Notes:
Chemical mapping of a 177-nucleotide RNA with DMS and 2A3. For 2A3, 860 sequencing reads were counted.

RNA sequence: GGGAACGACUCGAGUAGAGUCGAAAACGCGCCAUGUACAGCUCGGACGGUCCUGAUUUUGAGUUUGUACAGCAGAAGCGGAAAGAGGGGCUGAGUAUUCACGAGGCGGUCUGGCAGCUGGCGUGGAUAAAUGGGUCGUGUUCGCACGACCCAUUUAAAAAGAAACAACAACAACAAC
Reactivity to DMS in 0.01 (KOAc 150mM, MgCl2 10mM, bicine 150mM(pH8.5), 24C), signal-to-noise 2, nucleotides 027 to 126: c020g000c040g040c060c020a070u020g010u000a040c060a010g000c000u000c010g010g000a050c110g020g020u010c050c030u000g000a270u000u010u000u030g000a050g000u010u000u010g010u010a050c110a060g030c110a140g000a080a150g030c010g000g030a030a020a060g000a150g000g000g020g030c000u020g010a130g020u070a090u000u030c100a070c110g010a180g000g040c030g000g010u010c020u000g000g050c070a080g000c120u000g020g010c010g000u020g000g000a220
Reactivity to 2A3 in 0.01 (KOAc 150mM, MgCl2 10mM, bicine 150mM(pH8.5), 24C), signal-to-noise 2, nucleotides 027 to 126: c000g010c030g000c010c000a020u050g000u000a200c030a030g050c000u000c030g120g020a110c000g060g140u100c000c080u240g140a300u000u000u150u090g070a070g040u280u300u060g120u090a120c020a010g000c010a010g110a050a000g000c000g040g030a050a060a050g060a040g000g030g000g020c030u010g000a030g140u040a110u020u140c160a060c150g000a020g020g000c000g060g040u020c010u030g000g000c040a030g000c000u100g000g080c000g010u000g000g010a000
It was measured as part of the RMDB library OK1LIB. Reactivities are rounded to 0.1 and cut off at 0 and 3. The reactions ran in a buffer of 150 mM KOAc, 10 mM MgCl2 and 150 mM bicine (pH 8.5), at 24 C.